[RMDB]
RNA sequence: GGGAACGACUCGAGUAGAGUCGAAAAUGAAGCCUCAAGCCUUCCACACCAGCACAGUACUGAGGCUUGCCCAAGGCCUGUGACCACUACUGCUUGGCUGUCACUGAUGUUAAUUCAAGGCCUGAGGCUACUUUAGUCAGCAGGUUAUAAGCCAGCAGACUAUAAAGGUAUUCGUACCUUUAUAGUCAAAAGAAACAACAACAACAAC
Reactivity to DMS in 0.01 (KOAc 150mM, MgCl2 10mM, bicine 150mM(pH8.5), 24C), signal-to-noise 3, nucleotides 027 to 156: u000g010a150a080g030c000c020u000c020a050a070g000c000c020u010u010c060c090a150c030a050c050c020a070g030c080a070c050a070g030u000a130c060u000g020a140g000g020c030u000u000g000c080c030c030a160a130g010g000c000c010u000g010u010g010a090c020c010a300c070u000a040c030u000g000c040u000u000g030g030c010u000g000u000c070a050c010u000g010a030u000g020u000u010a080a200u000u010c050a090a090g010g010c000c010u000g010a170g010g000c000u000a010c050u000u000u000a090g020u000c030a100g020c030a090g020g020u000u000a110u010a070a120g010c020c010a050g040c030a250
Reactivity to 2A3 in 0.01 (KOAc 150mM, MgCl2 10mM, bicine 150mM(pH8.5), 24C), signal-to-noise 7, nucleotides 027 to 156: u110g020a040a000g000c000c000u000c000a020a010g020c000c010u130u100c090c040a070c020a040c050c040a010g030c030a020c020a040g060u110a050c040u080g070a030g020g000c000u010u080g030c020c010c000a030a040g020g010c000c010u070g030u090g130a060c040c040a050c090u110a030c030u030g070c050u100u170g090g000c030u030g010u060c040a030c110u060g050a130u060g120u140u160a110a040u260u120c050a020a020g010g000c000c000u000g000a010g010g000c000u010a020c010u040u070u040a020g030u020c020a020g010c020a010g040g010u070u090a170u060a200a020g030c000c010a010g030c030a010
Structure probing data (DMS and 2A3) for a 207-nucleotide construct. The DMS profile rests on 6,457 reads. 2A3 adducts were read by reverse transcription with SuperScript II with manganese.